The data come from the RNA Mapping Database (RMDB), library OK2TRN. This 177-nucleotide RNA was probed chemically with DMS and 2A3. For DMS, 7,744 sequencing reads were counted. Conditions: 150 mM KOAc, 10 mM MgCl2 and 150 mM bicine (pH 8.5), 24 C.

RNA sequence: GGGAACGACUCGAGUAGAGUCGAAAAAUUUCGGCGAUCCUGGCUACAAAAAAGUCGAAUGUCACCAAGCUCAUGCGUCUGGACGAUAGCGACGGUCGGCGCGCCUUCAAUGCCGGGACCAAUGCCGGUAACACGUAGUGUUCGCACUACGUGUUACAAAAGAAACAACAACAACAAC
Reactivity to DMS in 0.01 (KOAc 150mM, MgCl2 10mM, bicine 150mM(pH8.5), 24C), signal-to-noise 6, nucleotides 027 to 126: a130u000u010u000c020g020g010c010g000a050u000c000c010u000g010g000c010u010a160c210a020a050a070a090a030a040g000u000c010g000a050a040u020g010u000c040a050c010c010a110a300g000c040u010c270a050u010g010c030g020u000c070u010g030g010a070c040g010a060u000a040g000c020g000a140c260g010g010u000c070g030g000c010g000c020g010c060c020u000u000c090a090a090u010g010c000c000g000g000g000a020c020c030a070a080u010g020c000c000g010
Reactivity to 2A3 in 0.01 (KOAc 150mM, MgCl2 10mM, bicine 150mM(pH8.5), 24C), signal-to-noise 8, nucleotides 027 to 126: a000u100u110u080c010g010g000c010g010a010u010c000c000u010g020g000c010u070a060c150a020a190a030a030a010a000g010u020c000g050a110a160u220g020u020c010a010c030c020a040a030g000c010u080c050a060u300g130c010g040u040c120u210g220g150a040c020g020a040u040a040g020c010g030a070c120g000g000u050c090g000g000c010g000c010g010c020c000u040u040c080a070a050u130g000c000c000g010g000g000a000c010c030a140a090u210g000c000c000g040
Values cover nucleotides 27 to 126. DMS adducts were read by reverse transcription with MarathonRT.